[RMDB]
RNA sequence: GGGAACGACUCGAGUAGAGUCGAAAAAAAAAGGAAGUAUCGCCUAAUGGUAGGGCAGCAGCUUGGAAAGCUGUGGGCGGCUACGUCUUGUGGGUUCGAUUCCCUCUACUUCCGCCAAAUAAAAAAACGUCAAUCAGACGUUCGCGUCUGAUUGACGAAAAGAAACAACAACAACAAC
Reactivity to DMS in 0.01 (KOAc 150mM, MgCl2 10mM, bicine 150mM(pH8.5), 24C), signal-to-noise 1, nucleotides 027 to 126: a010a100a090a080a070g000g000a030a000g000u000a030u000c010g000c010c010u000a080a070u000g000g010u000a000g060g000g020c000a290g000c010a000g010c000u010u010g000g030a120a040a050g020c000u010g000u000g000g000g020c020g020g000c140u010a040c010g020u000c000u000u030g000u000g000g000g010u010u000c020g000a300u020u000c000c020c000u000c020u000a040c000u000u000c000c010g030c120c120a040a050a070u040a000a000a040a000a010a000a030